[RMDB]
Structure probing data (DMS and 2A3) for a 177-nucleotide construct. Reactivities are rounded to 0.1 and cut off at 0 and 3. The reactions ran in a buffer of 150 mM KOAc, 10 mM MgCl2 and 150 mM bicine (pH 8.5), at 24 C. 2A3 adducts were read by reverse transcription with SuperScript II with manganese.
RNA sequence: GGGAACGACUCGAGUAGAGUCGAAAAGCCACUUACGUACACUCCGUCUGACGUACAGUCUCACUCGCAUGACUAGUCAAAGUCAUGACUGUGAGCGAGUACGACUGAUGGUCAGUGCGAGUGUGGACUCCACGUACGAGUUCGCUCGUACGUGGAGAAAAGAAACAACAACAACAAC
Reactivity to DMS in 0.01 (KOAc 150mM, MgCl2 10mM, bicine 150mM(pH8.5), 24C), signal-to-noise 1, nucleotides 027 to 126: g020c000c010a130c170u010u010a060c050g000u030a030c020a080c060u000c000c000g020u000c020u000g010a020c000g060u000a020c030a090g000u000c020u000c120a060c000u000c020g000c000a050u020g000a080c000u000a060g000u010c090a070a130a110g040u020c150a070u000g000a090c080u010g040u000g000a060g040c000g000a050g000u000a030c150g000a030c000u000g010a030u000g020g020u000c010a040g000u010g000c070g000a050g000u020g000u010g000g000a230
Reactivity to 2A3 in 0.01 (KOAc 150mM, MgCl2 10mM, bicine 150mM(pH8.5), 24C), signal-to-noise 3, nucleotides 027 to 126: g090c040c010a050c060u110u160a040c030g120u040a000c020a000c010u010c000c030g170u130c040u000g000a010c010g110u130a010c040a030g030u000c000u000c010a010c000u010c040g000c020a090u070g050a110c010u090a040g060u080c020a120a100a020g230u100c040a140u040g050a060c010u010g040u020g020a010g000c000g020a010g010u020a010c050g000a010c000u000g000a030u100g030g020u000c000a010g010u010g030c040g000a010g040u010g020u010g000g010a050
The data come from the RNA Mapping Database (RMDB), library OK2TRN.